[RMDB]
RNA sequence: GGGAACGACUCGAGUAGAGUCGAAAAUCAUGCACGUUCGCGUGCAUGAAAAGGCGGCGAGUAUCGCUCAGCGCCGCGCUACAGCGCGCAGCGCAGCUGGAAAAAGAUGAAUCUUCGGAUUCAUCAACUCUCACGAGAAGUUCGCUUCUCGUGAGAGAAAAGAAACAACAACAACAAC
Reactivity to DMS in 0.01 (KOAc 150mM, MgCl2 10mM, bicine 150mM(pH8.5), 24C), signal-to-noise 2, nucleotides 027 to 126: u000c000a000u000g000c000a000c000g000u000u010c170g010c010g060u000g010c000a020u000g010a020a020a100a170g010g030c000g030g000c050g010a100g000u000a040u030c030g000c080u000c130a180g000c010g000c030c030g010c020g020c020u000a130c290a170g000c160g000c020g000c100a050g000c020g010c010a070g030c060u000g000g010a040a140a020a070a060g010a020u000g000a020a010u000c000u000u020c210g020g000a020u000u020c000a010u000c010a040a080
Reactivity to 2A3 in 0.01 (KOAc 150mM, MgCl2 10mM, bicine 150mM(pH8.5), 24C), signal-to-noise 1, nucleotides 027 to 126: u010c010a000u010g010c020a000c020g000u020u060c180g000c000g110u020g000c000a000u000g010a010a000a000a010g050g000c050g040g020c040g010a020g070u160a090u240c020g020c060u020c090a080g010c000g060c020c000g000c010g000c030u100a090c060a100g080c000g010c000g000c050a050g000c010g020c010a010g060c020u100g050g040a080a000a000a010a070g000a000u000g020a020a000u010c000u030u080c300g070g000a000u000u000c000a000u000c000a000a010